RNA sequence: GGGAACGACUCGAGUAGAGUCGAAAAUUGUUGAAUGCCUUUGACAAUACUGGUGAUUACUGGUGUGAUGUUGUACAUGGCACUACAACUUAUCAUUGUCUAGGCAGUUUGCGAGGCUUCAAUGCGCCAUUCUGACUUAUUUCGAUAAGUCAGAAUGAAAAGAAACAACAACAACAAC
Reactivity to 2A3 in 0.01 (KOAc 150mM, MgCl2 10mM, bicine 150mM(pH8.5), 24C), signal-to-noise 7, nucleotides 027 to 126: u080u070g030u010u030g030a050a030u120g000c010c000u110u050u170g060a070c010a030a060u080a130c050u040g170g010u100g120a150u110u190a050c030u040g040g000u000g020u020g050a020u030g000u050u030g020u030a030c030a120u080g160g000c050a010c030u010a010c010a050a010c010u090u150a030u050c030a020u010u120g050u030c010u010a010g030g060c000a000g010u010u030u030g010c020g010a020g000g060c000u040u040c050a050a070u080g040c030g040c010
Reactivity to DMS in 0.01 (KOAc 150mM, MgCl2 10mM, bicine 150mM(pH8.5), 24C), signal-to-noise 9, nucleotides 027 to 126: u010u010g010u000u000g000a070a060u010g020c000c000u000u010u010g020a080c010a020a030u020a050c070u000g010g020u000g010a150u010u010a090c170u000g010g010u000g010u010g000a060u000g000u000u010g010u000a200c090a080u000g010g000c130a090c170u000a010c020a020a020c100u000u010a070u000c030a060u000u000g010u000c040u000a130g010g010c000a020g000u000u000u000g010c030g000a040g000g010c030u000u000c070a030a040u000g010c190g020c100
About this RNA: This 177-nucleotide RNA was probed chemically with 2A3 and DMS.